RNA sequence: GGGAACGACUCGAGUAGAGUCGAAAAGCAGAGGCUGUAUCCGGUCUGCAAACACGACAGGGCUGGAAUGUCACCUGGAGUGGAGGACGGACUACUGGCUGUCUCCGGAGUAGGACGUCCGAAGAGAGGCAAGCAGCACGUUCGCGUGUUGCUUGCCAAAAGAAACAACAACAACAAC
Reactivity to DMS in 0.01 (KOAc 150mM, MgCl2 10mM, bicine 150mM(pH8.5), 24C), signal-to-noise 2, nucleotides 027 to 126: g000c020a070g000a080g020g010c050u000g020u020a080u040c030c010g030g010u020c000u000g000c110a130a130a100c040a020c000g000a190c000a010g000g000g020c030u020g040g010a090a070u010g040u020c050a210c010c000u010g000g030a210g020u000g000g010a080g010g000a020c000g010g030a040c010u000a000c000u010g000g010c020u020g030u020c010u000c030c020g040g000a060g020u000a000g000g040a010c000g010u000c010c010g000a100a040g000a150g000a210
Reactivity to 2A3 in 0.01 (KOAc 150mM, MgCl2 10mM, bicine 150mM(pH8.5), 24C), signal-to-noise 3, nucleotides 027 to 126: g040c010a000g010a030g080g020c040u040g120u220a150u070c030c050g030g080u000c020u030g070c020a050a050a020c000a030c020g030a000c000a000g020g000g090c000u070g050g140a200a110u220g080u110c040a040c120c000u000g000g000a010g000u020g020g090a050g000g000a000c000g000g000a000c000u000a010c030u060g150g060c010u020g070u100c080u000c070c000g040g020a010g000u000a000g000g000a000c010g000u000c020c000g010a090a010g050a010g020a000

Chemical mapping of a 177-nucleotide RNA with DMS and 2A3. Source: RMDB library OK1LIB, as collected in RNAgym. The reactions ran in a buffer of 150 mM KOAc, 10 mM MgCl2 and 150 mM bicine (pH 8.5), at 24 C.